[RMDB]
RNA sequence: GGGAACGACUCGAGUAGAGUCGAAAAGCGGUGGACGAUCUGGUCGGCUGGCGCGAGCGCAAGGAUGGCGACACCAUCAACCAUAGUGGUGUUCUGACGCCGUUCGACCUUUCGCGUGUCGAUGCGAUCAUCAGCUCCUAUUCGUAGGAGCUGAUGAAAAAGAAACAACAACAACAAC
Reactivity to 2A3 in 0.01 (KOAc 150mM, MgCl2 10mM, bicine 150mM(pH8.5), 24C), signal-to-noise 3, nucleotides 027 to 126: g010c040g070g000u070g050g040a040c030g010a050u000c040u070g030g000u020c010g000g020c050u090g050g010c020g000c030g030a030g000c040g010c020a030a060g060g030a040u040g000g010c020g020a010c000a020c020c000a020u110c030a030a100c020c020a080u190a180g050u030g020g020u010g010u060u050c080u140g070a060c030g010c010c000g000u010u000c000g040a040c000c000u010u080u020c020g000c000g020u080g050u040c020g000a040u080g100c000g030a050
Reactivity to DMS in 0.01 (KOAc 150mM, MgCl2 10mM, bicine 150mM(pH8.5), 24C), signal-to-noise 5, nucleotides 027 to 126: g000c050g010g020u000g010g000a070c070g000a060u000c060u000g020g020u000c040g020g000c020u020g020g020c020g010c060g000a050g010c120g000c090a080a170g010g000a030u000g020g020c010g000a100c020a050c030c010a010u010c080a080a150c270c170a060u000a160g020u000g000g000u000g010u000u000c170u010g010a130c070g020c000c010g000u010u000c020g010a160c260c010u000u000u000c030g020c010g010u000g000u000c030g000a060u000g010c060g000a150
Structure probing data (2A3 and DMS) for a 177-nucleotide construct. The DMS profile rests on 5,335 reads. The RNA was probed in 150 mM KOAc, 10 mM MgCl2 and 150 mM bicine (pH 8.5) at 24 C. It was measured as part of the RMDB library OK2TRN.